[RMDB]
Description:
The record gives the reactivity of an RNA of 177 nucleotides to DMS. Reactivities are given for positions 27 through 126. Conditions: 150 mM KOAc, 10 mM MgCl2 and 150 mM bicine (pH 8.5), 24 C. For DMS, 660 sequencing reads were counted. DMS adducts were read by reverse transcription with MarathonRT. The data come from the RNA Mapping Database (RMDB), library OK2TST.
RNA sequence: GGGAACGACUCGAGUAGAGUCGAAAAUCAGACUCAAGACUCCUGAGUAUCCAGAGGGAAGAGAGGUGGUCAUGAUCGCCAAUGACAUCACAGUGCAGGGUGGAUCGUUCGGAGUGGCGGAGGACCAGAUUGGCAACAACUUCGGUUGUUGCCAAUCAAAAGAAACAACAACAACAAC
Reactivity to DMS in 0.01 (KOAc 150mM, MgCl2 10mM, bicine 150mM(pH8.5), 24C), signal-to-noise 1, nucleotides 027 to 126: u010c050a120g010a020c030u000c030a020a180g010a150c030u000c010c000u000g000a150g000u010a070u020c040c110a110g030a120g010g000g000a100a120g000a120g020a040g060g010u000g030g000u000c030a050u000g000a030u000c050g000c110c050a010a050u010g000a050c080a030u020c080a040c100a080g040u010g040c010a120g010g010g030u000g030g000a050u000c130g010u010u020c060g000g000a160g000u000g010g010c060g030g040a100g000g000a040c050c030a120